An RNA of 177 nucleotides, treated with DMS and read out base by base.
The reactions ran in a buffer of 150 mM KOAc, 10 mM MgCl2 and 150 mM bicine (pH 8.5), at 24 C.
The data come from the RNA Mapping Database (RMDB), library M2PK90.
DMS adducts were read by reverse transcription with MarathonRT.
RNA sequence: GGGAACGACUCGAGUAGAGUCGAAAAGAAAAUCCCAAGCAUAGCAUAGCAUAGCAUAGCAUAGCAUAGCAUAGGAUAGCAUAGCAUAGCAUAGCAUAGCAUAGCAUAGCAUAGCAUACAAAAAAAAGGUUUUCAUUUAGUUCGCUAAAUGAAAACCAAAAGAAACAACAACAACAAC
Reactivity to DMS in 0.01 (KOAc 150mM, MgCl2 10mM, bicine 150mM(pH8.5), 24C), signal-to-noise 1, nucleotides 027 to 126: g000a150a050a100a170u000c030c000c000a140a180g020c100a050u000a060g010c060a060u000a070g000c080a050u000a050g030c000a020u010a070g010c040a070u020a070g030c040a050u000a080g010c000a050u000a040g010g000a050u010a050g000c060a040u020a110g010c000a020u010a140g050c000a050u000a050g010c000a060u000a060g010c020a040u000a060g020c040a020u000a060g030c050a040u000a020g000c060a030u000a020c010a000a000a000a070a040a010a040a100